RNA sequence: GGGAACGACUCGAGUAGAGUCGAAAAUUAAUGACGCUUUGACACUUUUGCACCAUACGCCCUUUUUCUUCGGGGUUGUAUUGGAUUUUGGUGUAGCUUGGAAAAAUAUCCUGCACUAAGUCACCCACGAAAAUACCUGGUCCCGUAGCAUCAACAACACUCUAACUACAUUCGUGUAGUUAGAGUGAAAAGAAACAACAACAACAAC
Reactivity to DMS in 0.01 (KOAc 150mM, MgCl2 10mM, bicine 150mM(pH8.5), 24C), signal-to-noise 3, nucleotides 027 to 156: u000u000a080a140u010g010a060c050g030c040u010u000u000g010a120c040a100c040u000u010u000u010g040c030a110c020c020a090u000a050c020g000c010c010c030u000u000u010u010u000c110u030u000c150g030g030g010g020u020u000g050u010a050u010u010g040g010a140u010u010u010u010g020g020u000g030u000a050g020c020u000u000g010g000a030a070a080a120a150u000a070u010c020c010u000g020c030a070c020u000a020a050g020u000c020a090c030c010c020a150c050g000a060a040a050a110u000a050c020c050u000g010g020u000c000c000c000g000u010a080g020c050a090u000c040a040a090c040a040a200
Reactivity to 2A3 in 0.01 (KOAc 150mM, MgCl2 10mM, bicine 150mM(pH8.5), 24C), signal-to-noise 7, nucleotides 027 to 156: u100u060a040a060u070g040a040c040g030c050u110u040u120g040a020c020a030c060u090u100u140u160g060c070a040c020c010a020u020a020c010g010c010c000c000u050u070u030u110u100c110u120u120c070g020g000g000g020u040u300g010u030a030u010u130g000g020a010u060u060u050u120g010g000u010g000u010a030g030c030u040u050g060g030a080a060a030a050a010u110a070u050c000c010u020g020c020a020c050u030a040a050g020u030c020a020c030c020c000a040c040g040a060a060a070a030u100a050c010c020u030g030g010u020c010c010c000g000u030a020g020c030a050u110c030a020a080c010a030a010
This 207-nucleotide RNA was probed chemically with DMS and 2A3. 2A3 adducts were read by reverse transcription with SuperScript II with manganese. The 2A3 profile rests on 6,181 reads.